[RMDB]
RNA sequence: GGGAACGACUCGAGUAGAGUCGAAAAACGCGGAGUACGCUCCGCGACAACACUUCUUUCGACCCGCUAACCGAGACCUAUGGGUCGUUAAAUUACGUCUCUAUCUUACUCACAUAACAUCGCAAAAAAAACGUGGUUCGGUUCGCCGAACCACGAACUUGUUGGACAACUUCGGUUGUCCAACAAGAAAAGAAACAACAACAACAAC
Reactivity to 2A3 in 0.01 (KOAc 150mM, MgCl2 10mM, bicine 150mM(pH8.5), 24C), signal-to-noise 1, nucleotides 027 to 156: a000c000g000c040g020g010a000g010u040a020c120g020c060u020c000c000g040c010g010a000c010a050a050c020a000c040u140u100c030u050u300u130c010g000a010c010c000c010g030c130u190a010a000c000c040g030a000g020a020c010c070u000a100u200g000g000g000u020c030g030u000u040a010a010a010u190u080a000c010g000u000c000u000c000u040a140u070c070u080u160a100c030u030c130a080c030a200u210a170a110c020a140u110c170g050c200a060a100a000a000a000a000a010a040c000g000u000g000g020u000u000c000g000g090u030u040c170g000c000c000g000a000a000c000c000a000c000g000a000a000